Overview:
The record gives the reactivity of an RNA of 177 nucleotides to 2A3 and DMS. The reactions ran in a buffer of 150 mM KOAc, 10 mM MgCl2 and 150 mM bicine (pH 8.5), at 24 C. The data come from the RNA Mapping Database (RMDB), library M2PK50. Values cover nucleotides 27 to 126. The DMS profile rests on 1,090 reads. DMS adducts were read by reverse transcription with MarathonRT.
[RMDB]
RNA sequence: GGGAACGACUCGAGUAGAGUCGAAAAUGUUCCGGAUUCGUCCGGAACAAAAUAUGGCACCGGUACUCGUCGAUACAAUGCGACGGAGAUGGACCGGGUGAAAAACCACUUAGUUCGCUAAGUGGAAACGAACCUACAGUUUCGACUGUAGGUUCGUAAAAGAAACAACAACAACAAC
Reactivity to 2A3 in 0.01 (KOAc 150mM, MgCl2 10mM, bicine 150mM(pH8.5), 24C), signal-to-noise 1, nucleotides 027 to 126: u040g000u000u000c000c010g010g000a030u050u070c180g030u000c000c000g020g040a000a010c000a000a000a000a010u250a070u070g160g000c030a060c090c020g050g010u010a010c010u010c020g000u010c000g010a010u100a210c120a250a080u300g050c010g010a010c040g030g050a060g020a040u140g050g000a000c000c000g000g000g030u110g080a060a010a010a010a000c000c000a000c000u000u020a010g000u080u040c170g000c170u000a000a010g030u010g000g000a120a000
Reactivity to DMS in 0.01 (KOAc 150mM, MgCl2 10mM, bicine 150mM(pH8.5), 24C), signal-to-noise 1, nucleotides 027 to 126: u000g020u000u000c000c000g000g000a000u000u000c190g020u000c000c060g000g000a010a010c010a010a020a070a080u000a100u000g020g000c030a110c020c000g040g020u000a050c010u000c000g010u010c030g000a030u010a090c250a100a030u000g000c020g000a000c010g020g010a090g010a140u000g000g010a010c000c020g030g000g010u000g010a010a060a060a160a150c010c000a020c000u000u000a000g010u000u070c140g000c000u000a030a000g010u000g000g010a000a060